[RMDB]
RNA sequence: GGGAACGACUCGAGUAGAGUCGAAAAUGACGGCAUGAAACAAAUAAUAUUUGAUUUGUUACAUCUGAAGGAUUAUAAGGCUAAUGAGUAAGAAUAACUCGAUGCUCCACUUCAGGUGAUUCGUAUGCUAUAGGAGUUAGCAAUCUAGUUCUUGUCAGGAAAAUUACCGUUUCGACGGUAAUUUUCCAAAAGAAACAACAACAACAAC
Reactivity to 2A3 in 0.01 (KOAc 150mM, MgCl2 10mM, bicine 150mM(pH8.5), 24C), signal-to-noise 1, nucleotides 027 to 156: u080g000a050c050g000g030c000a030u050g080a090a000a020c010a000a000a040u220a080a030u150a300u080u190u300g060a000u000u000u060g000u000u010a000c010a000u010c000u050g000a010a010g030g030a000u080u000a080u270a200a030g080g000c030u000a110a060u270g030a000g000u030a140a040g150a230a140u130a100a000c010u000c010g010a030u140g050c030u010c100c010a080c000u000u000c000a010g000g000u000g040a000u030u010c000g000u060a050u040g000c000u000a030u040a170g080g060a130g000u050u030a000g140c010a020a090u110c060u150a000g030u090u000c000u000u000g090u000c160a020

Chemical mapping of a 207-nucleotide RNA with 2A3.
The 2A3 profile rests on 357 reads.
The data come from the RNA Mapping Database (RMDB), library OK3TST.